[RMDB]
This 177-nucleotide RNA was probed chemically with 2A3 and DMS. The data come from the RNA Mapping Database (RMDB), library TTRDEL. For 2A3 the reverse transcriptase was SuperScript II with manganese. For DMS the reverse transcriptase was MarathonRT. Conditions: 150 mM KOAc, 10 mM MgCl2 and 150 mM bicine (pH 8.5), 24 C.

RNA sequence: GGGAACGACUCGAGUAGAGUCGAAAAGAUAUGGAUCUGUACGUCUUGGAUUUACUAUCGGAAACGAUAGUUGUCAGACGGCAGAGUCCUAAGUCAAAACUUGUAUAUGCUUCGGCAUAUACAAGAAGACCCUUAAAUAGUUCGCUAUUUAAGGGUCAAAAGAAACAACAACAACAAC
Reactivity to 2A3 in 0.01 (KOAc 150mM, MgCl2 10mM, bicine 150mM(pH8.5), 24C), signal-to-noise 6, nucleotides 027 to 126: g020a000u050a030u110g000g000a010u000c000u010g040u090a300c020g010u010c030u140u300g150g010a080u240u240u230a020c000u000a000u010c010g030g020a070a020a020c010g000a000u000a000g000u010u000g000u010c030a020g000a000c000g000g010c010a000g020a010g100u020c000c000u020a110a020g040u020c020a020a000a120a190c010u010u000g000u000a000u000a000u010g000c010u030u090c270g050g000c010a000u000a000u000a000c000a010a000g000a000a000
Reactivity to DMS in 0.01 (KOAc 150mM, MgCl2 10mM, bicine 150mM(pH8.5), 24C), signal-to-noise 6, nucleotides 027 to 126: g010a040u000a300u010g000g000a240u000c000u000g000u010a130c000g010u000c000u010u010g020g010a020u000u010u000a010c000u000a000u000c010g010g000a120a070a150c010g010a010u000a010g020u000u000g000u000c010a040g000a010c000g010g000c000a010g010a030g010u010c000c000u000a060a120g010u000c020a100a080a120a160c000u000u000g000u000a000u000a000u000g010c000u000u010c230g030g000c000a010u000a000u000a000c000a000a000g010a080a120